Source: RMDB library OK3TST, as collected in RNAgym. This 207-nucleotide RNA was probed chemically with 2A3 and DMS. DMS adducts were read by reverse transcription with MarathonRT. For 2A3, 2,122 sequencing reads were counted. 2A3 adducts were read by reverse transcription with SuperScript II with manganese. The reactions ran in a buffer of 150 mM KOAc, 10 mM MgCl2 and 150 mM bicine (pH 8.5), at 24 C.
RNA sequence: GGGAACGACUCGAGUAGAGUCGAAAACAGGCCGUGGAAACUACAGAAGUCAGUACCAUCCUGACGUCGGACUGAUCGACGCCAGCGCAAACGAGCUGAACAGCUCGACCACCACUGUGCCGUGCGCCAUCUAUGCGUUCGGCGCUCAGCAGCGCUCUAUGGUAACAUGCUUCGGCAUGUUACCAUAAAAAGAAACAACAACAACAAC
Reactivity to 2A3 in 0.01 (KOAc 150mM, MgCl2 10mM, bicine 150mM(pH8.5), 24C), signal-to-noise 4, nucleotides 027 to 156: c040a020g050g000c020c070g100u110g010g050a120a140a040c050u130a060c080a090g080a190a020g090u040c030a000g040u060a160c020c020a060u120c020c010u000g000a010c000g020u030c030g040g050a050c070u060g090a180u100c050g030a020c010g020c020c020a010g010c000g000c040a010a080a060c030g000a000g000c020u110g050a210a070c110a110g000c000u010c010g020a090c050c010a040c010c010a040c100u020g020u070g040c000c000g020u010g000c010g020c000c010a160u060c110u160a120u300g010c010g020u010u020c030g000g000c000g030c040u030c040a080g000c010a010g000c010g000c000u050c010
Reactivity to DMS in 0.01 (KOAc 150mM, MgCl2 10mM, bicine 150mM(pH8.5), 24C), signal-to-noise 1, nucleotides 027 to 156: c040a100g060g030c040c040g000u000g000g000a070a090a080c050u000a160c020a080g000a040a050g000u000c020a010g020u000a120c060c050a060u000c110c000u000g000a060c030g010u020c020g000g010a260c130u110g030a120u040c030g010a090c000g040c020c010a030g020c060g020c040a080a090a100c000g000a030g020c000u000g000a100a160c070a060g010c010u000c010g000a050c030c030a040c060c040a120c030u010g000u000g030c010c000g040u000g000c000g000c010c030a130u000c090u000a080u000g030c040g020u000u010c050g000g000c010g030c050u000c030a070g000c070a090g010c030g010c020u000c050